[RMDB]
RNA sequence: GGGAACGACUCGAGUAGAGUCGAAAAGUGUUUUUCUGCACGAGUUGGUUAAGCCAUUACUUCAUUUUGUGAAAGUUUGUUGAGUUAAACUUAGGUAACUUAAUCUGUCAAUCCACUUAAUUGAAUUCAGUCCUGGUAAACUAUAAUAGAUUAUUCACCUAGCGUAGCAUUUCGAUGCUACGCUAGGAAAAGAAACAACAACAACAAC
Reactivity to 2A3 in 0.01 (KOAc 150mM, MgCl2 10mM, bicine 150mM(pH8.5), 24C), signal-to-noise 1, nucleotides 027 to 156: g030u010g040u040u070u010u030u080c080u070g000c070a040c040g060a050g040u070u050g050g000u030u150a080a060g070c050c010a070u040u180a050c020u000u040c000a120u090u050u150u080g080u060g080a120a110a090g040u020u190u140g000u030u030g040a020g060u010u060a070a110a180c050u000u080a020g080g000u020a030a000c000u010u010a020a000u050c050u160g100u040c020a030a050u000c070c050a010c100u120u250a030a100u210u050g020a000a030u030u120c020a040g000u040c000c000u020g020g030u030a010a000a080c040u030a060u100a300a040u110a030g020a030u150u130a140u170u190c050a040
This 207-nucleotide RNA was probed chemically with 2A3. The RNA was probed in 150 mM KOAc, 10 mM MgCl2 and 150 mM bicine (pH 8.5) at 24 C. 2A3 adducts were read by reverse transcription with SuperScript II with manganese. For 2A3, 462 sequencing reads were counted.